Structure probing data (2A3) for a 207-nucleotide construct. 2A3 adducts were read by reverse transcription with SuperScript II with manganese. Reactivities are given for positions 27 through 156.
RNA sequence: GGGAACGACUCGAGUAGAGUCGAAAAAGCCAUACCAUUACGAUGGUAUGGCACGUCCGUGACGGCGAUGGAUCCCGCCUGGCCGAUGCCGAACUGCCGAUCUGGCUGAUGGUUCCUGCCCCGUCAAAAAACGUAAAGCACUUCGGUGCUUUACGAAGUACUGUGAGGAGUUCGCUCCUCACAGUACAAAAGAAACAACAACAACAAC
Reactivity to 2A3 in 0.01 (KOAc 150mM, MgCl2 10mM, bicine 150mM(pH8.5), 24C), signal-to-noise 2, nucleotides 027 to 156: a010g000c000c010a000u000a010c000c000a010u040u040a030c280g140a020u020g000g000u010a000u000g000g000c010a000c000g070u000c010c000g020u030g000a010c000g000g040c080g060a010u060g000g010a020u070c030c000c010g020c020c030u020g020g000c000c020g030a050u170g080c030c050g150a250a120c120u130g040c030c020g050a070u050c110u150g000g000c020u050g040a160u120g010g000u020u010c020c000u060g030c000c020c000c000g000u000c000a000a000a030a040a020a110c010g000u000a000a000a000g010c000a010c010u050u080c240g110g000u010g000c000u000u010u000a000c000g000a020a000
It was measured as part of the RMDB library M2RFPK. The reactions ran in a buffer of 150 mM KOAc, 10 mM MgCl2 and 150 mM bicine (pH 8.5), at 24 C.